[RMDB]
RNA sequence: GGGAACGACUCGAGUAGAGUCGAAAAUGGGACGUUCGCGUCCCACCGAUGGGGUCUCGUCGGCAGGAGGGACAUGCUCUGAAGCCUCCACGGAGCAACAGCCUCCCCACCCUGCGGACGAGACGGAGGCACCCGGUCUUGGACAUUCGUGUCCAAAUCAUAUAAACUCAUUCGUGAGUUUAUAUGAAAAAGAAACAACAACAACAAC
Reactivity to 2A3 in 0.01 (KOAc 150mM, MgCl2 10mM, bicine 150mM(pH8.5), 24C), signal-to-noise 4, nucleotides 027 to 156: u090g000g000g010a010c030g010u100u080c280g040c010g100u020c040c000c010a010c010c000g100a190u230g170g000g000g010u010c000u000c000g000u010c020g200g000c020a010g020g060a260g090g010g010a010c040a060u030g000c000u010c000u000g060a130a050g010c000c000u020c020c000a020c010g000g010a000g000c000a050a130c030a080g070c000c070u020c000c000c010c000a300c050c000c000u000g000c060g060g000a000c000g000a000g000a000c000g000g000a000g010g000c000a030c010c030c000g030g030u080c080u040u030g000g000a010c010a040u030u080c250g120u080g000u020c000c010a020a010a000
Reactivity to DMS in 0.01 (KOAc 150mM, MgCl2 10mM, bicine 150mM(pH8.5), 24C), signal-to-noise 2, nucleotides 027 to 156: u000g010g030g020a020c000g080u010u010c290g070c070g000u000c000c000c000a000c000c050g010a110u010g020g050g010g010u000c000u000c000g010u000c010g030g060c020a020g030g030a150g070g040g020a120c140a300u010g010c000u010c010u000g010a100a140g000c030c000u010c000c010a300c000g010g010a090g010c000a060a080c170a170g000c050c070u000c030c020c070c160a120c100c000c010u020g020c000g000g030a020c020g000a010g000a010c020g000g000a020g060g080c020a120c020c000c010g000g000u000c070u000u000g010g020a050c020a140u000u000c290g020u000g030u010c010c010a030a060a150